[RMDB]
RNA sequence: GGGAACGACUCGAGUAGAGUCGAAAAGAGAGUGUAUGCUUGUCUACGUAUGGGUAUUUAUAAGUAAAUGGAGAGUUGUAAUGACGAGAAGUUUACAAAGUAAUAUCUGUUCCCGUAUGGGAAUUUUGUGUUAAUUAAUUUUCGAAUUAAUUAACACAAAAGAAACAACAACAACAAC
Reactivity to 2A3 in 0.01 (KOAc 150mM, MgCl2 10mM, bicine 150mM(pH8.5), 24C), signal-to-noise 7, nucleotides 027 to 126: g050a000g010a020g030u080g030u160a140u290g060c030u040u040g050u120c030u060a080c060g080u110a090u180g010g000g020u020a010u020u120u010a080u030a070a080g010u020a040a010a010u020g040g020a100g020a050g090u020u040g070u140a200a110u210g020a010c020g020a030g040a290a010g010u010u010u000a020c010a000a110a010g020u020a020a030u000a010u040c020u020g040u040u010c030c000c010g000u080a150u110g000g000g040a030a030u010u000u000u000
Reactivity to DMS in 0.01 (KOAc 150mM, MgCl2 10mM, bicine 150mM(pH8.5), 24C), signal-to-noise 2, nucleotides 027 to 126: g000a080g000a030g000u000g010u040a060u020g020c020u010u000g000u000c040u000a060c070g000u010a070u000g000g000g000u000a040u010u000u000a040u010a040a300g000u000a000a040a000u000g010g000a260g020a170g020u000u000g010u010a100a070u080g020a010c040g000a060g010a170a130g000u000u000u000a010c030a020a060a170g000u010a040a010u000a050u000c030u000g010u000u000c010c000c010g040u030a040u020g010g000g000a070a040u000u000u000u000

The data come from the RNA Mapping Database (RMDB), libraries RFM100 and RFMREP. Structure probing data (2A3 and DMS) for a 177-nucleotide construct. Values are in units of 0.01, from 0 to 300, in steps of 10. Conditions: 150 mM KOAc, 10 mM MgCl2 and 150 mM bicine (pH 8.5), 24 C. Values cover nucleotides 27 to 126.